[RMDB]
This 177-nucleotide RNA was probed chemically with 2A3 and DMS. Conditions: 150 mM KOAc, 10 mM MgCl2 and 150 mM bicine (pH 8.5), 24 C.
RNA sequence: GGGAACGACUCGAGUAGAGUCGAAAACUGCACUCAAGUACACCACAUGUUCGCUUACAAUCGCGAACACGGAACAAACUACACGAGGAACCAUUUUAGAAGGUACUUAGCAGCCCAGCGAAUAGGCGCAGGAGGAAGGAUUCGUCCUUCCUCCUGCAAAAGAAACAACAACAACAAC
Reactivity to 2A3 in 0.01 (KOAc 150mM, MgCl2 10mM, bicine 150mM(pH8.5), 24C), signal-to-noise 4, nucleotides 027 to 126: c020u000g020c030a040c080u200c070a030a040g000u000a010c010a050c020c000a090c040a160u060g020u040u000c000g050c020u080u050a130c120a180a210u260c130g000c000g000a000a010c000a000c000g010g030a080a060c050a140a090a070c170u100a040c060a060c090g070a100g020g030a060a040c000c000a180u120u060u010u110a190g020a160a060g070g010u010a060c020u040u040a010g000c020a010g010c000c000c000a060g050c020g010a070a190u210a270g010g060c010
Reactivity to DMS in 0.01 (KOAc 150mM, MgCl2 10mM, bicine 150mM(pH8.5), 24C), signal-to-noise 1, nucleotides 027 to 126: c220u140g040c000a100c000u000c110a210a190g000u000a100c000a300c000c000a080c280a000u000g050u000u000c000g000c000u060u130a240c300a090a000u040c150g000c000g010a000a030c030a000c120g000g010a050a080c190a180a060a150c220u000a000c010a080c140g000a080g000g000a030a110c010c000a070u000u020u000u000a130g000a190a080g000g000u000a030c000u000u000a030g000c000a040g000c000c000c030a090g000c090g030a060a190u080a120g120g000c050